[RMDB]
RNA sequence: GGGAACGACUCGAGUAGAGUCGAAAAUAGCAGGACAUAGCCGUUAUGCGCGAAGCGGUGUAGCGUCACUUUGAUGGCGGUACUAUGAAUUGAUGCAAGGUGUGGAGCGACCUUACACAGUUCUGGUUUGACGGCUUUCAGUUCGCUGAAAGCCGAAGAGUAUCAUAUGUUUCGACAUAUGAUACUCAAAAGAAACAACAACAACAAC
Reactivity to 2A3 in 0.01 (KOAc 150mM, MgCl2 10mM, bicine 150mM(pH8.5), 24C), signal-to-noise 9, nucleotides 027 to 156: u140a020g030c040a020g010g040a040c030a070u090a030g020c000c010g050u070u060a080u170g070c080g000c040g050a040a010g030c030g020g020u070g020u060a040g070c010g020u040c020a030c090u200u170u230g170a240u070g050g000c010g030g030u030a020c020u040a050u180g030a040a030u060u040g060a080u030g050c030a020a010g000g000u030g020u100g050g010a010g010c020g010a010c000c000u020u030a020c030a000c010a020g010u020u010c020u050g040g060u040u080u140g070a030c010g000g000c000u000u000u000c000a010g000u010u070c130g000c110u000g000a000a000a000g000c000c000g000a010a000
Reactivity to DMS in 0.01 (KOAc 150mM, MgCl2 10mM, bicine 150mM(pH8.5), 24C), signal-to-noise 3, nucleotides 027 to 156: u000a060g040c030a050g020g030a110c060a090u000a160g010c020c020g020u020u000a060u010g030c040g010c070g020a090a150g030c000g000g000u000g010u000a050g010c030g030u010c020a020c030u000u020u010g010a140u000g020g020c030g040g020u010a030c060u010a050u010g010a030a050u010u000g010a130u000g020c030a030a030g010g040u000g050u010g000g010a140g000c070g020a060c010c000u000u000a030c020a040c030a050g000u000u000c010u000g030g010u000u000u000g020a190c010g030g010c010u000u000u010c000a010g020u000u010c300g010c020u000g010a030a020a010g030c000c000g000a000a020

Chemical mapping of a 207-nucleotide RNA with 2A3 and DMS. Source: RMDB library M2RFPK, as collected in RNAgym. 2A3 adducts were read by reverse transcription with SuperScript II with manganese. Reactivities are given for positions 27 through 156.